This 177-nucleotide RNA was probed chemically with DMS and 2A3. DMS adducts were read by reverse transcription with MarathonRT. The 2A3 profile rests on 1,238 reads. The RNA was probed in 150 mM KOAc, 10 mM MgCl2 and 150 mM bicine (pH 8.5) at 24 C.

[RMDB]
RNA sequence: GGGAACGACUCGAGUAGAGUCGAAAAGGGAGCCAGUGCUCAGGGCAGCUGAGCCCUAUUGACUGUUACUGUUGCAUUCUCCAUGUUCAGCUCUUUGGGGGAUGGGAUGGGGUGGGGCCCUACCUGGCACCAUGAAAACGUUCGCGUUUUCAUGGUGAAAAGAAACAACAACAACAAC
Reactivity to DMS in 0.01 (KOAc 150mM, MgCl2 10mM, bicine 150mM(pH8.5), 24C), signal-to-noise 3, nucleotides 027 to 126: g000g000g020a070g020c100c100a030g000u010g010c050u000c090a030g010g000g010c060a050g030c060u000g000a120g000c050c070c040u010a040u010u000g010a100c040u010g020u000u010a090c090u000g000u010u010g010c020a050u010u000c020u000c020c040a100u000g020u010u010c090a060g010c070u000c120u000u010u000g000g010g000g010g000a080u000g010g000g010a160u010g010g000g010g000u000g000g000g000g010c000c010c010u000a040c080c040u000g000g010
Reactivity to 2A3 in 0.01 (KOAc 150mM, MgCl2 10mM, bicine 150mM(pH8.5), 24C), signal-to-noise 2, nucleotides 027 to 126: g010g020g000a030g050c040c090a050g010u030g110c020u030c030a010g030g010g010c010a050g050c080u080g040a040g070c070c000c000u110a190u080u110g070a050c020u020g120u200u140a230c020u100g160u300u210g070c000a010u060u000c010u000c030c020a060u070g050u110u090c050a040g010c150u050c000u200u210u120g030g000g010g000g090a080u090g030g040g010a110u120g000g050g030g090u180g020g000g040g000c000c000c000u030a040c010c020u000g000g120